Record summary:
This 207-nucleotide RNA was probed chemically with DMS and 2A3. DMS adducts were read by reverse transcription with MarathonRT. The data come from the RNA Mapping Database (RMDB), library RSTRND. Reactivities are rounded to 0.1 and cut off at 0 and 3. The RNA was probed in 150 mM KOAc, 10 mM MgCl2 and 150 mM bicine (pH 8.5) at 24 C.

RNA sequence: GGGAACGACUCGAGUAGAGUCGAAAACCCGCCCUUGGCCGAUCUGCUAAAACUCUAAGGGGAUAAGCGUUGGAGAUCCGUGCCUGUCCGGGAGCCAACGUCGAAAACCAAAGAUCAGGCUAAGCAUGUAGAUCUGAGGGCUACGAUCUGGCGGACGGUUUAUAUAGUAGUUCGCUACUAUAUAAACAAAAGAAACAACAACAACAAC
Reactivity to DMS in 0.01 (KOAc 150mM, MgCl2 10mM, bicine 150mM(pH8.5), 24C), signal-to-noise 2, nucleotides 027 to 156: c010c000c030g040c040c030c010u000u010g030g030c020c020g010a050u000c060u000g040c050u000a080a080a140a080c070u000c060u010a110a150g000g030g020g020a140u000a090a080g020c020g030u000u000g010g010a100g030a100u000c000c010g030u000g050c000c040u010g010u000c050c020g000g020g020a150g030c010c000a020a030c040g000u000c030g010a090a120a100a090c010c030a130a150a040g010a030u000c010a110g060g010c020u000a060a100g000c040a070u000g040u010a050g030a050u000c030u010g010a200g010g010g030c010u000a070c080g000a070u000c040u000g000g020c030g000g010a110c040g000
Reactivity to 2A3 in 0.01 (KOAc 150mM, MgCl2 10mM, bicine 150mM(pH8.5), 24C), signal-to-noise 6, nucleotides 027 to 156: c010c000c000g010c020c010c000u010u020g030g030c030c020g030a040u010c020u030g030c060u180a130a110a130a140c080u070c060u180a150a140g020g010g000g010a030u060a120a020g010c010g000u000u000g010g010a100g010a150u040c010c010g050u090g020c010c060u060g060u080c040c010g010g010g010a050g060c000c000a000a010c000g040u070c020g060a060a070a040a060c010c020a080a080a000g000a020u040c070a090g010g010c010u020a020a010g010c020a040u170g030u100a030g000a070u020c040u070g070a070g020g070g000c010u020a010c030g040a090u030c040u080g040g000c020g030g020a040c050g040